[RMDB]
RNA sequence: GGGAACGACUCGAGUAGAGUCGAAAAACUUAAUUUCCAACUCAUCACUGUUGUGGCAACAGUGCAUGUCCUUCUGAAAAAAAGACAUCUCCAUCAACAUGUCGGUGCUGAAGGACCUGAGGGGCCCACUCCAAAGAUCCUUUAAUUGCCGGAGAAGUAGCUAGUAUACAUUCGUGUAUACUAGCUAAAAAGAAACAACAACAACAAC
Reactivity to DMS in 0.01 (KOAc 150mM, MgCl2 10mM, bicine 150mM(pH8.5), 24C), signal-to-noise 2, nucleotides 027 to 156: a070c080u000u000a050a110u020u000u000c000c040a150a130c120u000c020a090u010c010a040c020u000g020u010u000g030u020g010g000c040a100a050c020a040g020u020g030c140a040u000g010u000c050c030u000u000c040u010g000a010a000a040a090a080a030a080g010a070c010a040u000c040u010c030c030a130u020c080a090a060c050a060u000g020u000c020g000g010u000g000c110u010g000a060a070g020g000a020c000c010u000g010a300g010g020g020g010c190c120c300a130c040u030c020c010a030a300a070g000a030u000c000c010u010u000u010a050a160u010u010g000c050c040g000g010a090g000a100a170g000
Reactivity to 2A3 in 0.01 (KOAc 150mM, MgCl2 10mM, bicine 150mM(pH8.5), 24C), signal-to-noise 5, nucleotides 027 to 156: a000c090u120u120a040a080u100u060u020c030c010a040a060c020u040c070a060u060c000a030c020u020g060u060u040g110u230g240g000c030a050a010c020a040g030u020g040c060a030u030g010u020c010c040u090u110c090u100g100a070a010a010a000a020a120a000g040a050c020a050u110c050u130c170c010a140u240c040a070a090c010a110u110g040u140c020g000g020u040g000c030u010g000a010a000g000g000a000c010c010u030g000a030g000g000g000g030c010c020c040a210c060u010c010c010a000a010a040g010a010u000c000c000u010u040u050a080a060u140u170g010c000c010g080g000a060g010a060a020g060
Chemical mapping of a 207-nucleotide RNA with DMS and 2A3. For DMS the reverse transcriptase was MarathonRT. Source: RMDB library OK3TST, as collected in RNAgym.